[RMDB]
RNA sequence: GGGAACGACUCGAGUAGAGUCGAAAAGCCUCCACGGCGGCGUGGGCCUCUGGGGUGAGUUCGGCGGGGUGGUUGAAGUGGGUGACGACCCAGAGCGGCCGGGCGGCGGCGAGGAUGCGGGCGAGCCGUUGGGUUAACCUUUCGAGGUUAACCCAACAAAAGAAACAACAACAACAAC
Reactivity to DMS in 0.01 (KOAc 150mM, MgCl2 10mM, bicine 150mM(pH8.5), 24C), signal-to-noise 1, nucleotides 027 to 126: g000c050c000u010c050c060a150c050g040g000c050g030g020c040g030u010g060g010g000c060c040u000c040u000g050g020g000g030u000g020a080g000u000u000c090g030g020c110g000g000g020g040u010g000g010u010u010g010a070a140g000u000g010g010g030u040g000a100c150g010a100c010c000c010a100g010a100g010c090g010g000c040c040g010g010g020c100g000g020c030g000g010c000g030a080g020g000a050u000g020c060g020g000g010c040g010a080g040c070c110